[RMDB]
RNA sequence: GGGAACGACUCGAGUAGAGUCGAAAAGCCUCCUCGCUUCCAUAGAAAGGGGACGGGGCAGAUCGCAAGUGCUACAACCGAGCGGUGGUAUCUGUCAAACUAAGCAGCCACUGCACAUCAAUUCACUAAACGAUGCCGAUCUUCGGAUCGGCAUCAACCAAAACAAAUUCUUCGGAAUUUGUUUUGGAAAAGAAACAACAACAACAAC
Reactivity to 2A3 in 0.01 (KOAc 150mM, MgCl2 10mM, bicine 150mM(pH8.5), 24C), signal-to-noise 4, nucleotides 027 to 156: g010c000c000u010c000c010u020c010g050c100u060u030c030c000a110u060a270g190a070a110a050g010g020g000g000a000c020g000g000g000g030c020a020g000a060u030c010g000c030a000a000g020u030g040c020u130a130c060a130a060c080c080g120a030g050c000g010g010u010g010g000u030a030u030c000u010g060u090c060a050a060a070c060u100a110a030g000c000a000g000c000c010a000c000u010g030c010a020c010a050u160c090a100a130u280u180c090a030c120u200a120a100a030c100g000a000u000g000c000c000g000a000u000c020u030u050c190g080g000a000u000c000g000g010c000a000u010c000a000a000
Reactivity to DMS in 0.01 (KOAc 150mM, MgCl2 10mM, bicine 150mM(pH8.5), 24C), signal-to-noise 1, nucleotides 027 to 156: g030c020c000u000c000c010u010c000g020c000u010u000c020c040a150u000a150g020a140a170a220g000g020g000g010a010c070g020g000g000g050c110a000g010a050u010c030g040c010a090a100g030u000g040c070u000a080c030a080a280c100c080g000a120g050c010g030g040u010g030g030u010a050u000c080u000g010u020c030a100a050a080c160u010a100a060g020c060a090g040c030c000a010c010u010g070c050a150c150a120u010c050a120a080u000u000c060a140c070u010a060a080a170c120g010a020u000g000c000c000g010a010u000c000u000u000c270g020g030a010u000c010g000g040c000a000u000c000a030a100